[RMDB]
RNA sequence: GGGAACGACUCGAGUAGAGUCGAAAAAAGUUUCCGGGAAUUUGAGGGAUUGUGGAUGCCGUGGAGACUUUAUCACUACUGAUAACAUUUUGGAAUAUCAGAACUGCACGGUUUUAAACGGAGGACACUAGUAUUUACCCUUCGGGGUAAAUACUAGAAAAGAAACAACAACAACAAC
Reactivity to DMS in 0.01 (KOAc 150mM, MgCl2 10mM, bicine 150mM(pH8.5), 24C), signal-to-noise 3, nucleotides 027 to 126: a100a130g010u000u000u000c000c000g020g000g000a100a100u020u000u000g000a120g020g000g000a110u040u010g010u020g000g010a140u000g010c010c020g020u000g010g010a030g010a130c120u010u010u010a040u010c140a130c180u020a140c020u000g010a030u000a010a120c080a170u000u010u000u020g000g030a120a130u000a010u000c010a010g010a110a090c100u000g010c030a030c070g000g000u000u020u020u000a060a100a120c040g010g000a110g000g020a130c250a090
Reactivity to 2A3 in 0.01 (KOAc 150mM, MgCl2 10mM, bicine 150mM(pH8.5), 24C), signal-to-noise 1, nucleotides 027 to 126: a000a000g000u000u010u000c010c000g020g020g100a090a240u230u170u120g060a020g000g020g000a020u120u110g100u070g110g000a040u020g000c020c000g000u010g050g080a020g010a060c020u250u160u120a120u220c050a070c230u300a040c010u000g000a020u020a110a050c020a100u130u160u210u300g140g040a190a040u040a000u100c000a000g060a150a020c060u120g010c000a020c000g010g000u150u030u000u080a090a060a000c020g040g070a010g020g050a000c000a000
Chemical mapping of a 177-nucleotide RNA with DMS and 2A3. DMS adducts were read by reverse transcription with MarathonRT. The reactions ran in a buffer of 150 mM KOAc, 10 mM MgCl2 and 150 mM bicine (pH 8.5), at 24 C. The 2A3 profile rests on 561 reads. It was measured as part of the RMDB library OK2TST.